[RMDB]
RNA sequence: GGGAACGACUCGAGUAGAGUCGAAAAGAUAUGGAUCCAGAUAGCUGAGCGAUAAGCAUGAGAGGUAUUGGUCGGAAACGACCAAUACCUCUCAAUGCUUUUGACGCUCCGAAAGGAUCCUAAGUCACCUGUCUACAUGGUUCGCCAUGUAGACAGGAAAAGAAACAACAACAACAAC
Reactivity to DMS in 0.01 (KOAc 150mM, MgCl2 10mM, bicine 150mM(pH8.5), 24C), signal-to-noise 1, nucleotides 027 to 126: g000a050u000a300u000g000g000a030u000c000c000a110g030a150u010a070g030c300u000g000a010g070c010g020a150u000a020a010g000c010a010u000g000a050g000a030g010g000u010a000u000u010g010g010u000c020g000g000a080a120a150c010g000a010c000c010a010a040u000a000c010c000u000c000u000c010a000a030u000g000c000u020u000u000u000g010a300c110g010c010u010c000c020g000a100a240a080g030g000a010u000c010c000u000a030a100g000u000c030a260